[RMDB]
An RNA of 177 nucleotides, treated with 2A3 and DMS and read out base by base.
It was measured as part of the RMDB library OK2TST.
Reactivities are given for positions 27 through 126.
The 2A3 profile rests on 2,784 reads.
Conditions: 150 mM KOAc, 10 mM MgCl2 and 150 mM bicine (pH 8.5), 24 C.
For DMS the reverse transcriptase was MarathonRT.
RNA sequence: GGGAACGACUCGAGUAGAGUCGAAAACAAAAUGAGUUCUGGCUGACUUCUGUCCCUGGGUGGGAUCACACACAUGGUUGAGCCAGAUUAUCCGUUUGGGUGGUGUCAUCUGCUGCAUCUGAAUGCAAUGUUUAGAGCUUUUCGAAGCUCUAAACAUAAAAGAAACAACAACAACAAC
Reactivity to 2A3 in 0.01 (KOAc 150mM, MgCl2 10mM, bicine 150mM(pH8.5), 24C), signal-to-noise 3, nucleotides 027 to 126: c010a000a070a040a130u210g060a060g100u080u050c020u020g010g000c010u000g000a030c020u030u040c030u140g030u030c010c000c010u090g110g100g100u190g050g080g040a070u180c010a020c000a000c000a000c010a130u150g000g010u020u050g100a010g020c000c000a000g020a010u010u010a030u000c040c050g070u050u060u070g080g010g010u080g000g050u040g050u070c040a080u010c080u060g040c040u040g000c010a030u020c060u100g100a120a010u110g030c030a040
Reactivity to DMS in 0.01 (KOAc 150mM, MgCl2 10mM, bicine 150mM(pH8.5), 24C), signal-to-noise 5, nucleotides 027 to 126: c070a060a080a080a060u000g010a110g020u000u000c010u000g000g000c010u000g000a050c020u010u010c180u010g000u000c000c010c010u000g020g010g020u000g000g000g000a080u000c130a070c160a070c160a080c120a050u000g000g010u010u010g010a050g020c000c000a030g000a040u010u010a070u000c030c090g010u000u010u000g010g010g030u010g000g010u010g000u000c060a070u000c060u000g010c070u000g000c030a040u000c090u010g010a110a110u000g010c090a110